[RMDB]
RNA sequence: GGGAACGACUCGAGUAGAGUCGAAAAACGGAUCAAGGCAUAGCCGCGGCCAUGUCGUCCGCUAUCCAGCCCUUAGUUAUGGCAGUAGUCAAUAGAGAGAGGGAUGGUCAAACUGGGUCGGGUGGUCCGACGGAAUUAACUUCGGUUAAUUCCGUCGAAAAGAAACAACAACAACAAC
Reactivity to 2A3 in 0.01 (KOAc 150mM, MgCl2 10mM, bicine 150mM(pH8.5), 24C), signal-to-noise 2, nucleotides 027 to 126: a010c030g020g000a000u120c100a170a010g010g000c020a000u050a020g010c000c050g080c120g080g000c010c010a000u050g070u070c020g040u010c010c020g000c030u040a030u060c010c020a010g050c010c000c000u070u070a110g050u060u080a130u100g000g000c040a100g100u230a030g030u020c040a070a140u070a140g110a000g020a010g000a030g040g040g000a030u050g040g000u040c050a080a060a050c080u030g000g010g040u050c020g000g000g030u030g020g010u000c000
Reactivity to DMS in 0.01 (KOAc 150mM, MgCl2 10mM, bicine 150mM(pH8.5), 24C), signal-to-noise 3, nucleotides 027 to 126: a100c050g000g000a040u000c150a120a080g010g000c030a020u000a100g020c030c000g010c210g060g000c010c010a040u000g040u020c020g020u000c020c030g020c070u010a060u010c020c040a090g000c030c000c020u010u000a090g010u010u010a080u000g010g000c020a130g010u010a110g000u000c020a050a080u000a090g010a120g010a130g000a080g000g000g030a070u000g020g010u000c120a030a050a140c100u020g020g000g000u000c020g020g010g030u010g010g020u000c090